Description: An RNA of 207 nucleotides, treated with DMS and 2A3 and read out base by base.
RNA sequence: GGGAACGACUCGAGUAGAGUCGAAAAUAGUUACUGGAAACGGAAUAACUGUAGCUAACAAUGCCCUUCAAACUAAAGUUGCGGGUGCCCUGGGUUAUGACUCAUCUGGCAAUCUAGAAUUGCGAGCCGCAGGGGGUAUGCGAAUUAACACAGGGGGGAUGUCAUGUUAUUUCGAUAACAUGACAUCAAAAGAAACAACAACAACAAC
Reactivity to DMS in 0.01 (KOAc 150mM, MgCl2 10mM, bicine 150mM(pH8.5), 24C), signal-to-noise 2, nucleotides 027 to 156: u000a020g030u000u000a010c040u000g010g000a050a130a300c050g000g010a090a090u020a060a110c010u000g000u000a040g000c020u000a050a130c110a090a080u010g020c000c010c000u000u000c080a070a120a090c050u000a100a160a150g000u000u000g020c020g000g030g010u000g010c020c020c020u010g020g000g020u000u000a060u020g000a210c000u000c040a100u000c090u030g010g000c030a030a080u000c040u010a140g010a090a130u000u000g030c020g000a070g020c000c000g040c080a100g020g010g010g030g010u010a050u000g000c000g000a030a110u010u000a030a080c040a000c050a080g000g030g050g010g000
Reactivity to 2A3 in 0.01 (KOAc 150mM, MgCl2 10mM, bicine 150mM(pH8.5), 24C), signal-to-noise 3, nucleotides 027 to 156: u010a000g000u000u010a000c000u080g100g090a210a200a020c110g090g120a150a170u150a150a030c030u030g000u020a010g000c000u010a030a000c040a110a020u060g020c000c000c000u080u140c100a120a120a130c030u200a170a030a080g030u020u030g020c060g030g090g040u050g030c000c000c010u010g010g030g000u030u030a060u060g030a050c010u020c050a080u040c090u080g100g000c000a010a020u020c040u150a110g050a240a100u020u030g010c030g020a010g060c060c040g080c120a070g010g020g000g040g050u050a010u030g020c040g020a060a090u100u010a040a030c030a000c010a080g010g020g000g010g040
The DMS profile rests on 2,415 reads. The reactions ran in a buffer of 150 mM KOAc, 10 mM MgCl2 and 150 mM bicine (pH 8.5), at 24 C. DMS adducts were read by reverse transcription with MarathonRT. The 2A3 profile rests on 1,741 reads.